[RMDB]
RNA sequence: GGGAACGACUCGAGUAGAGUCGAAAAAUAUACCCUCGGCGUACCAGUCGAGGUGACCCGAAGUGUGGAACAGCUGCGCCUUGGUAAUAUGCGGGGUGUUGACGAAUUGGUAGCCGGCUUCGAUGUGAGUACCCUAUGCAUUCGUGCAUAGGGUACUAAAAGAAACAACAACAACAAC
Reactivity to 2A3 in 0.01 (KOAc 150mM, MgCl2 10mM, bicine 150mM(pH8.5), 24C), signal-to-noise 3, nucleotides 027 to 126: a000u200a020u100a040c010c000c000u010c000g020g000c010g000u070a170c060c050a070g000u020c000g000a010g020g000u020g070a030c000c000c000g030a040a000g050u090g080u160g070g000a110a080c020a030g010c020u040g000c010g000c000c020u090u080g100g020u210a200a130u100a140u300g080c000g000g000g000g000u020g000u040u060g050a080c070g020a040a110u040u070g060g010u030a060g010c020c000g030g000c000u010u000c030g040a050u110g120u050g130
Reactivity to DMS in 0.01 (KOAc 150mM, MgCl2 10mM, bicine 150mM(pH8.5), 24C), signal-to-noise 3, nucleotides 027 to 126: a130u030a100u040a110c160c000c030u010c010g020g000c000g000u050a080c280c150a150g030u000c000g010a030g000g000u010g010a030c070c030c010g010a050a040g000u000g020u020g020g030a080a040c050a110g000c030u000g000c000g000c010c010u020u000g000g000u000a130a090u030a050u050g020c030g000g010g000g020u000g000u020u000g030a110c060g000a100a040u040u020g010g000u020a070g010c030c010g020g000c040u010u000c040g000a110u010g010u010g010